This 177-nucleotide RNA was probed chemically with 2A3 and DMS. For 2A3, 15,831 sequencing reads were counted. Source: RMDB library TTRDEL, as collected in RNAgym. Values cover nucleotides 27 to 126. DMS adducts were read by reverse transcription with MarathonRT.

RNA sequence: GGGAACGACUCGAGUAGAGUCGAAAAGAUAUGGAAUUCAUGAUCACCGAAGAACUCGGAAACGAGGGAGGUGGCCAUGAGAUUCCUAAGUCAAAGCUAGUAACGGAGUUCGCUCCGUUACUAGCAAGUCUUAGAGUUAGUUCGCUAACUCUAAGACAAAAGAAACAACAACAACAAC
Reactivity to 2A3 in 0.01 (KOAc 150mM, MgCl2 10mM, bicine 150mM(pH8.5), 24C), signal-to-noise 4, nucleotides 027 to 126: g020a020u080a070u180g000g000a010a010u020u020c000a000u010g000a020u020c010a000c000c020g130a260a050g020a030a020c010u000c010g020g040a080a060a060c010g000a000g020g000g020a020g010g000u000g000g000c000c000a000u010g020a040g020a010u000u020c000c000u030a140a010g020u040c080a120a050a050g000c000u000a000g000u010a010a000c000g010g010a000g020u080u160c200g100c120u010c000c000g000u000u000a000c000u000a000g000c000a000a000
Reactivity to DMS in 0.01 (KOAc 150mM, MgCl2 10mM, bicine 150mM(pH8.5), 24C), signal-to-noise 5, nucleotides 027 to 126: g000a050u010a300u010g010g000a010a000u000u000c010a000u000g000a030u000c000a000c000c000g000a130a160g000a120a160c010u000c000g000g020a100a080a170c010g000a010g010g000g000a090g010g030u000g000g010c050c000a000u000g010a050g000a020u010u000c000c000u010a040a140g010u010c050a080a110a150g000c000u000a010g010u000a000a010c000g010g010a020g030u000u010c290g000c000u000c000c000g000u000u000a000c010u000a000g010c000a010a020